Background:
The record gives the reactivity of an RNA of 170 nucleotides to DMS and 2A3. The reactions ran in a buffer of 150 mM KOAc, 10 mM MgCl2 and 150 mM bicine (pH 8.5), at 24 C. For DMS, 4,933 sequencing reads were counted.
RNA sequence: GGGAACGACUCGAGUAGAGUCGAAAAAUUCUGGGUCUACUUACAGUAUAUAGAAAAACUGUAUAAAGACCUUACAGGACACAUGCUUGACAGUUAUUCUGUCAUGCUAUGUGGUGAUAAUUCUGCUAGGCGGCAACGUUCGCGUUGCCGAAAAGAAACAACAACAACAAC
Reactivity to DMS in 0.01 (KOAc 150mM, MgCl2 10mM, bicine 150mM(pH8.5), 24C), signal-to-noise 3, nucleotides 027 to 129: a110u030u060c030u020g050g000g030u000c000u110a170c150u080u000a010c000a030g040u010a080u050a300u040a160g070a090a100a160a050a020c000u000g030u010a000u010a110a140a050g020a010c070c010u020u000a040c080a040g030g040a130c030a030c030a030u000g000c030u000u130g030a020c030a000g020u030u110a110u110u020c000u010g010u000c000a040u030g000c010u040a010u010g030u000g020g030u000g030a110u000a120a130u000u000c000u000g010c000u030a150g050g000
Reactivity to 2A3 in 0.01 (KOAc 150mM, MgCl2 10mM, bicine 150mM(pH8.5), 24C), signal-to-noise 3, nucleotides 027 to 129: a010u090u050c090u120g000g000g000u000c020u000a130c040u050u000a010c000a000g010u000a080u020a070u090a180g300a010a080a010a050a000c000u000g040u020a000u020a010a060a000g000a000c000c000u000u000a050c000a020g030g030a010c000a010c000a010u000g020c000u010u010g000a000c000a040g020u060u210a120u230u140c000u000g000u000c000a000u010g000c020u030a010u020g000u020g000g030u000g020a020u010a150a200u130u040c000u030g020c040u080a020g070g030
Record summary: For 2A3, 4,188 sequencing reads were counted. 2A3 adducts were read by reverse transcription with SuperScript II with manganese.